[RMDB]
Structure probing data (2A3 and DMS) for a 170-nucleotide construct. The DMS profile rests on 60,754 reads. Source: RMDB library 15KLIB, as collected in RNAgym. Values cover nucleotides 27 to 129. Conditions: 150 mM KOAc, 10 mM MgCl2 and 150 mM bicine (pH 8.5), 24 C. 2A3 adducts were read by reverse transcription with SuperScript II with manganese.
RNA sequence: GGGAACGACUCGAGUAGAGUCGAAAAUUGCAGGCGUGUCCAUACUUAGCACAAUGACUAAUCGCCAGUACCAUCAGAAAAUGCUUAAGUCCAUGGCUGCAACUCGUGGAGCGACUUGCGUCAUUGGUAAGAGUGUACUUCGGUACACUCAAAAGAAACAACAACAACAAC
Reactivity to 2A3 in 0.01 (KOAc 150mM, MgCl2 10mM, bicine 150mM(pH8.5), 24C), signal-to-noise 9, nucleotides 027 to 129: u110u090g030c030a010g020g010c020g030u050g080u010c030c010a030u050a110c040u060u070a010g010c040a020c040a110a120u100g030a040c020u080a070a070u090c030g000c020c010a000g020u020a060c020c020a020u080c020a020g160a070a110a030a030u120g030c010u120u120a080a020g030u020c020c010a020u030g020g000c050u110g010c060a020a020c010u020c030g030u090g100g080a120g070c020g030a060c020u010u020g010c010g000u010c010a030u040u130g020g010u040a060a020
Reactivity to DMS in 0.01 (KOAc 150mM, MgCl2 10mM, bicine 150mM(pH8.5), 24C), signal-to-noise 9, nucleotides 027 to 129: u000u000g030c090a050g020g030c030g000u020g040u060c000c000a040u000a080c100u010u000a060g020c060a040c150a080a060u050g020a080c060u040a080a070u050c060g020c020c010a070g010u040a100c050c040a100u030c140a060g040a080a090a080a070u080g020c040u010u040a050a100g010u030c020c030a020u040g000g000c030u050g020c060a040a030c060u020c000g000u010g000g060a160g000c010g010a030c090u010u020g000c000g030u020c000a000u020u030g020g010u000a040a050